[RMDB]
Annotation
The record gives the reactivity of an RNA of 177 nucleotides to DMS.
RNA sequence: GGGAACGACUCGAGUAGAGUCGAAAAGAGUGUGCAACAGACGUGGGUCCACAAUUCAAAACAGCAAACCGCUGGAUCACUAUGGUCUCACAUGGACUGAUCAGUGUGGAGAAACCCAAAAUAAUCAAGACUAGGUAUCCUUCGGGAUACCUAGUCUAAAAGAAACAACAACAACAAC
Reactivity to DMS in 0.01 (KOAc 150mM, MgCl2 10mM, bicine 150mM(pH8.5), 24C), signal-to-noise 2, nucleotides 027 to 126: g010a050g050u030g050u000g000c130a010a080c050a050g030a050c140g030u000g010g010g000u030c020c010a050c020a020a130u010u020c240a040a050a030a140c050a010g020c040a020a150a140c300c120g000c010u000g000g000a050u000c030a110c030u010a010u000g000g000u010c130u030c080a130c080a010u010g000g000a140c190u010g000a020u000c020a140g030u000g010u020g010g000a050g000a030a100a110c000c000c010a120a010a050a020u030a050a120u010c160a080